An RNA of 177 nucleotides, treated with DMS and read out base by base.
Values cover nucleotides 27 to 126.
The reactions ran in a buffer of 150 mM KOAc, 10 mM MgCl2 and 150 mM bicine (pH 8.5), at 24 C.
It was measured as part of the RMDB library OK2TST.
RNA sequence: GGGAACGACUCGAGUAGAGUCGAAAAUGGCUAGGGAAAAGCUGCACGCCCGCGCGGUCGGCGGGCGGCAGAGGCGUCGCUCAGGACCUGCCGACGAACUGGCGAGCUGGAGAAACCGGGCGAAAAACCCUAUAAUGCGGUUCGCCGCAUUAUAGGGAAAAGAAACAACAACAACAAC
Reactivity to DMS in 0.01 (KOAc 150mM, MgCl2 10mM, bicine 150mM(pH8.5), 24C), signal-to-noise 1, nucleotides 027 to 126: u000g000g030c030u000a120g020g010g000a160a090a160a140g010c010u000g000c020a200c020g000c010c010c010g050c090g020c070g010g030u000c060g000g010c000g030g010g030c000g000g030c010a000g000a090g000g010c130g020u000c080g020c040u000c020a110g030g020a130c000c020u000g020c030c030g000a070c090g010a140a080c090u010g000g000c020g000a070g010c040u010g000g000a090g020a080a120a100c090c120g030g020g000c050g020a050a060a110a160a150